Notes: This 207-nucleotide RNA was probed chemically with 2A3 and DMS. The 2A3 profile rests on 6,196 reads. The DMS profile rests on 3,368 reads.
RNA sequence: GGGAACGACUCGAGUAGAGUCGAAAACCCACCAAGUUCUUAUCAAGAGAAGCAGAGGGACUGGCCCGACGAAGCUUCAGCAACCGGUGUAAUGGCGAAAGCCAUGACCAAGGUGCUAAAUCCAGCAAGCUCGAACAGCUUGGAACAUAAGAACAGACGAUAUUUACUACUUCGGUAGUAAAUAUCGAAAAGAAACAACAACAACAAC
Reactivity to 2A3 in 0.01 (KOAc 150mM, MgCl2 10mM, bicine 150mM(pH8.5), 24C), signal-to-noise 5, nucleotides 027 to 156: c000c000c000a010c020c050a110a050g000u010u000c010u040u060a050u070c070a110a030g060a010g000a100a000g000c020a000g010a010g000g000g010a020c000u020g040g050c000c000c000g120a200c000g010a020a000g000c000u000u010c010a000g000c000a040a060c000c010g030g000u080g120u230a080a060u000g000g000c010g050a090a000a000g000c000c000a000u010g010a010c010c010a060a110g000g000u000g000c000u020a020a030a030u040c000c000a010g050c010a050a000g000c000u100c140g140a130a070c060a040g000c010u000u000g000g010a030a030c040a030u050a030a000g020a010a010c020a010g080a030
Reactivity to DMS in 0.01 (KOAc 150mM, MgCl2 10mM, bicine 150mM(pH8.5), 24C), signal-to-noise 2, nucleotides 027 to 156: c010c000c000a180c080c030a140a140g020u000u080c020u000u000a090u000c050a060a160g000a280g010a030a030g010c020a080g010a210g030g010g030a200c060u000g020g030c090c000c020g020a130c100g010a140a240g040c040u000u000c010a090g000c020a040a030c020c010g040g050u000g040u000a040a010u020g000g020c000g000a130a090a260g010c010c000a010u000g000a050c020c010a140a090g000g010u000g030c000u000a060a090a050u000c030c020a120g000c010a020a000g000c000u000c040g030a170a110c210a110g000c000u000u010g010g030a080a070c080a060u000a010a030g000a030a020c030a210g010a230